Background: The record gives the reactivity of an RNA of 177 nucleotides to 2A3 and DMS. High DMS reactivity at an A or C suggests that its Watson-Crick edge is free. The reactions ran in a buffer of 150 mM KOAc, 10 mM MgCl2 and 150 mM bicine (pH 8.5), at 24 C. The DMS profile rests on 6,313 reads.

RNA sequence: GGGAACGACUCGAGUAGAGUCGAAAAAGGGUGUGUGACUGGUUGACCAGAGGGGCGUGCACUCUGUUCACCCUGUGGGCCACCUAGUCACCAACCCUAAACUUUCAAGGGGUUCGCCCCUUGAAAGCUACGAGAAUAGGUUCGCCUAUUCUCGUAGAAAAGAAACAACAACAACAAC
Reactivity to 2A3 in 0.01 (KOAc 150mM, MgCl2 10mM, bicine 150mM(pH8.5), 24C), signal-to-noise 3, nucleotides 027 to 126: a000g010g010g000u020g000u020g010u010g000a000c010u010g000g020u030u020g010a020c000c010a000g020a020g150g020g010g020c170g020u030g000c020a030c130u300c170u110g020u030u020c010a020c010c000c000u090g080u020g170g000g020c020c000a000c000c010u020a010g010u000c000a000c000c000a000a030c010c000c000u020a100a070a010c000u010u000u000c000a010a000g000g010g010g010u020u050c130g060c000c000c000c000u000u000g000a000a000a000g000
Reactivity to DMS in 0.01 (KOAc 150mM, MgCl2 10mM, bicine 150mM(pH8.5), 24C), signal-to-noise 4, nucleotides 027 to 126: a030g010g010g040u000g000u000g010u000g000a000c000u000g010g010u000u000g000a070c000c010a050g010a170g000g010g010g010c160g020u000g010c030a170c230u020c260u010g010u000u000c020a060c000c010c000u000g010u000g010g000g010c050c050a020c040c010u000a010g010u010c010a020c000c050a060a060c000c000c000u000a020a070a210c000u000u000u000c000a000a000g000g000g000g020u000u010c280g000c000c000c000c000u000u000g000a000a000a000g000